[RMDB]
RNA sequence: GGGAACGACUCGAGUAGAGUCGAAAAAUAAAUGCUGACGUCAACGUGGUCACCCAGGCCAGAAACAGGCCAACAACCCUGUCCGGCUGCAAGAAAGGGAAGAAUUUUUCUUUUGCAGGUACAAAAACUAAUGUCGAAUGUUCGCAUUCGACAUUAGAAAAGAAACAACAACAACAAC
Reactivity to DMS in 0.01 (KOAc 150mM, MgCl2 10mM, bicine 150mM(pH8.5), 24C), signal-to-noise 2, nucleotides 027 to 126: a080u010a060a080a080u000g010c030u000g010a040c130g000u000c120a060a060c130g030u020g000g020u000c050a090c020c020c010a240g000g020c000c010a030g010a100a070a100c130a050g010g010c060c050a050a130c190a060a080c100c010c010u000g000u000c040c060g000g000c000u000g010c050a050a070g000a060a020a040g010g000g010a060a040g000a080a040u010u000u010u000u020c020u000u000u000u000g020c020a050g010g000u010a070c130a040a060a070a060a080
Reactivity to 2A3 in 0.01 (KOAc 150mM, MgCl2 10mM, bicine 150mM(pH8.5), 24C), signal-to-noise 1, nucleotides 027 to 126: a030u120a000a050a050u070g000c030u040g050a000c040g040u090c020a050a060c060g090u100g000g010u000c010a050c020c000c010a000g000g020c000c010a040g100a010a190a020c060a050g000g020c030c000a010a050c030a010a030c050c030c000u000g020u070c010c010g050g030c000u000g040c020a000a040g070a140a020a010g070g000g010a060a060g050a050a030u020u140u010u060u040c010u010u110u000u070g000c010a030g010g010u230a150c030a030a160a000a020a000
Conditions: 150 mM KOAc, 10 mM MgCl2 and 150 mM bicine (pH 8.5), 24 C. Chemical mapping of a 177-nucleotide RNA with DMS and 2A3. For 2A3 the reverse transcriptase was SuperScript II with manganese. For 2A3, 1,109 sequencing reads were counted. Source: RMDB library M2PK90, as collected in RNAgym.